[RMDB]
RNA sequence: GGGAACGACUCGAGUAGAGUCGAAAAGUUUCUUGAGUUUCUUCUUGGUCUUCCGGAGGUCCCUCUCGAGCUCUUCCGCUUUCUUUCUUCCAUUGACCCACUGCUCGAGGACGUCCUCCCUGUCUCCUUACUAUGCGAUUCGUCGCAUAGAAAAGAAACAACAACAACAAC
Reactivity to 2A3 in 0.01 (KOAc 150mM, MgCl2 10mM, bicine 150mM(pH8.5), 24C), signal-to-noise 9, nucleotides 027 to 129: g020u020u040u040c010u050u090g050a050g040u020u020u020c010u030u010c020u030u070g040g010u020c000u060u020c040c020g020g010a020g020g020u040c020c010c000u020c010u010c020g020a030g000c030u020c000u070u010c030c020g040c040u050u080u030c000u020u060u010c010u060u000c030c020a130u030u120g030a040c020c010c020a050c050u010g000c010u000c000g000a020g010g070a140c000g020u030c000c020u040c000c000c000u010g030u020c040u040c030c010u020u020a040
Reactivity to DMS in 0.01 (KOAc 150mM, MgCl2 10mM, bicine 150mM(pH8.5), 24C), signal-to-noise 8, nucleotides 027 to 129: g030u020u020u020c000u020u020g040a190g040u010u010u020c030u000u050c040u000u000g020g030u030c000u030u030c040c060g040g010a070g020g030u020c030c050c010u030c040u020c040g000a080g030c040u010c050u000u000c050c090g000c090u030u040u030c000u020u030u030c040u050u000c030c060a130u050u070g000a080c000c030c090a100c020u000g000c000u030c010g030a040g050g000a120c110g020u000c000c070u040c010c020c010u050g030u000c010u030c040c020u020u020a170